[RMDB]
RNA sequence: GGGAACGACUCGAGUAGAGUCGAAAAUUAGAAGAUUAGUGAAGCGCAAUGAAUGAAAUGCAUUCUUUUAUGUGAAAAUACAAAAAGAAUAAAUGUCCUGCAGGUGAAUGGGGCUGUAGCAAUCUUACAAGGUAUAUUCAUUCGUGAAUAUACCUUGAAAAGAAACAACAACAACAAC
Reactivity to 2A3 in 0.01 (KOAc 150mM, MgCl2 10mM, bicine 150mM(pH8.5), 24C), signal-to-noise 7, nucleotides 027 to 126: u100u030a030g030a080a000g020a020u030u080a050g040u040g050a070a030g020c010g000c120a060a090u110g090a070a060u110g050a070a110a050u110g020c020a020u000u020c000u020u040u020u030a300u080g010u020g080a170a180a050a050u220a070c010a000a020a000a000a000g020a020a000u070a090a060a040u080g020u020c010c010u010g030c020a060g070g130u090g080a080a080u120g000g000g000g020c020u010g020u010a010g010c010a010a070u000c000u000u020a020
Reactivity to DMS in 0.01 (KOAc 150mM, MgCl2 10mM, bicine 150mM(pH8.5), 24C), signal-to-noise 7, nucleotides 027 to 126: u030u020a090g020a070a070g010a060u010u010a070g020u010g010a100a100g010c050g010c040a060a070u010g020a110a090u020g010a050a090a070u010g010c090a040u000u000c000u000u000u000u010a090u010g010u010g000a090a070a120a120u040a030c010a000a040a010a010a010g000a030a010u000a050a110a070u010g000u010c030c020u000g000c070a040g000g020u010g010a060a060u010g000g000g000g030c030u010g000u010a120g010c090a050a040u010c010u000u000a200
Overview
This 177-nucleotide RNA was probed chemically with 2A3 and DMS. For DMS the reverse transcriptase was MarathonRT. In probing experiments dimethyl sulfate is read out at A N1 and C N3, which are open when not base-paired.